The data come from the RNA Mapping Database (RMDB), library M2PK50.
This 177-nucleotide RNA was probed chemically with DMS and 2A3.
High 2A3 reactivity points to a flexible backbone, as in loops and unpaired stretches.
For 2A3, 2,210 sequencing reads were counted.
RNA sequence: GGGAACGACUCGAGUAGAGUCGAAAAACACGGAACUUCGGUUCCGUGUAUAGGGACGAAAUAACACGAUAGCGCUUGACGCCCGAGCAAAAAGGCGGAAAAACUGCAUCCUCUUCGGAGGAUGCAAUCUUAACCUGUGGUUCGCCACAGGUUAAGAAAAAGAAACAACAACAACAAC
Reactivity to DMS in 0.01 (KOAc 150mM, MgCl2 10mM, bicine 150mM(pH8.5), 24C), signal-to-noise 2, nucleotides 027 to 126: a020c000a010c000g000g000a010a000c000u000u010c190g050g010u000u000c000c000g010u000g010u000a010u000a060g010g000g010a060c050g010a060a070a050u000a050a060c110a060c070g000a080u010a060g020c060g000c030u000u000g000a090c040g010c010c010c000g010a030g010c080a010a060a030a140a130g010g000c010g020g000a060a040a040a050a100c220u010g010c010a010u000c000c000u000c000u000u000c120g030g000a020g010g000a010u000g000c020a020a020
Reactivity to 2A3 in 0.01 (KOAc 150mM, MgCl2 10mM, bicine 150mM(pH8.5), 24C), signal-to-noise 2, nucleotides 027 to 126: a000c000a000c010g000g010a000a010c010u070u090c200g080g000u000u000c000c000g000u010g010u000a000u020a010g000g020g070a030c040g050a040a080a100u210a100a020c040a020c090g090a040u070a040g110c070g000c070u010u020g030a000c020g000c000c030c010g020a040g000c070a000a050a020a010a000g050g000c020g140g000a000a030a060a000a030c040u030g000c000a000u000c020c010u020c020u050u050c250g090g000a010g000g000a000u020g000c000a000a000